[RMDB]
RNA sequence: GGGAACGACUCGAGUAGAGUCGAAAACGUGCAACUUUCUGGCUGAUAGGAUCUUUCCAUUCUUGUUUGAAGGAAUGGCCAUCCUUCUCAAAUGGGAUAUCUUGGCUCCAUAGUUUUGCAUGGACAAGGUCGGGUCCAAUUUCGAUUGGACCCGACCAAAAGAAACAACAACAACAAC
Reactivity to 2A3 in 0.01 (KOAc 150mM, MgCl2 10mM, bicine 150mM(pH8.5), 24C), signal-to-noise 2, nucleotides 027 to 126: c030g000u000g000c000a000a000c000u040u110u040c040u110g150g020c070u050g000a030u030a050g000g010a000u000c190u020u040u000c020c000a010u060u090c120u190u220g110u300u080u180g000a010a000g000g020a010a020u100g110g000c030c010a040u000c000c000u000u000c010u040c030a020a030a040u010g000g030g000a000u010a000u000c020u030u010g080g000c020u000c040c010a000u000a090g000u050u080u050u000g000c000a000u010g010g000a050c030a040a110